Conditions: 150 mM KOAc, 10 mM MgCl2 and 150 mM bicine (pH 8.5), 24 C. The record gives the reactivity of an RNA of 177 nucleotides to DMS. DMS adducts were read by reverse transcription with MarathonRT. Reactivities are given for positions 27 through 126. It was measured as part of the RMDB library RFM100.
RNA sequence: GGGAACGACUCGAGUAGAGUCGAAAAAGUGUUUGAAUGUGGAUGGAAUUAAAGCUGGGUUUGUAGUGAGCCAUUAGGAUUAUGGCAAAUGUCUAGUGUACAGAAUUCAGUGUAGGCCGGGAGUUGAUACCCCAUCAGGUUUCGACCUGAUGGGGUAAAAAGAAACAACAACAACAAC
Reactivity to DMS in 0.01 (KOAc 150mM, MgCl2 10mM, bicine 150mM(pH8.5), 24C), signal-to-noise 1, nucleotides 027 to 126: a040g010u000g030u000u000u010g030a070a020u000g000u030g000g030a040u000g000g010a140a100u010u020a100a030a170g010c040u030g000g000g000u010u000u000g010u000a050g010u000g000a240g000c040c020a020u000u000a070g060g000a140u010u030a030u000g000g000c050a020a080a080u020g000u010c040u010a080g000u010g000u010a040c040a050g000a100a040u000u000c000a050g000u020g000u000a070g000g000c070c000g000g000g000a040g000u000u000g020a170